[RMDB]
RNA sequence: GGGAACGACUCGAGUAGAGUCGAAAAGGUUACUUCGGUAACCGGUACGGGGUCUGAGAUACGAUCCGUUGAUCAUGGAACUACUCCUGAAGCCUCCACGGGAGCCAUGGGAGGAUCGUCUCAGACGGAGGCACCCAGACUAUCGCUUCGGCGAUAAGUCACAUAUACCUUUCGAGGUAUAUGUGACAAAAGAAACAACAACAACAAC
Reactivity to 2A3 in 0.01 (KOAc 150mM, MgCl2 10mM, bicine 150mM(pH8.5), 24C), signal-to-noise 7, nucleotides 027 to 156: g000g000u010u010a000c020u040u150c300g070g000u000a000a000c010c000g000g020u080a060c050g020g010g040g010u010c010u010g010a010g000a030u180a250c120g010a010u000c000c000g050u150u020g000a000u000c000a010u000g010g030a130a110c080u200a090c010u300c000c000u010g020a040a010g010c000c000u000c000c010a020c010g010g000g000a000g020c010c000a000u000g000g000g010a020g000g000a000u000c000g010u000c000u000c000a000g010a000c020g000g000a000g000g000c000a010c000c000c000a020g060a090c080u040a010u010c000g000c030u050u090c280g130g000c000g010a010u020a040a060
Reactivity to DMS in 0.01 (KOAc 150mM, MgCl2 10mM, bicine 150mM(pH8.5), 24C), signal-to-noise 2, nucleotides 027 to 156: g030g000u000u000a010c000u000u000c250g050g000u000a000a000c000c010g000g010u000a070c060g020g000g000g020u030c000u000g000a050g000a120u000a060c070g000a040u010c000c000g010u000u000g010a110u000c020a040u000g000g000a180a120c200u010a300c020u000c010c000u000g000a060a090g030c010c040u000c020c020a300c040g040g000g010a050g030c000c010a020u010g000g020g000a040g030g000a030u000c000g010u000c020u000c000a020g010a020c000g010g030a050g030g040c000a020c010c010c000a300g010a110c060u000a020u020c010g010c000u000u010c270g050g000c040g020a010u000a010a110
Source information
Structure probing data (2A3 and DMS) for a 207-nucleotide construct. Source: RMDB library RNAMAK, as collected in RNAgym.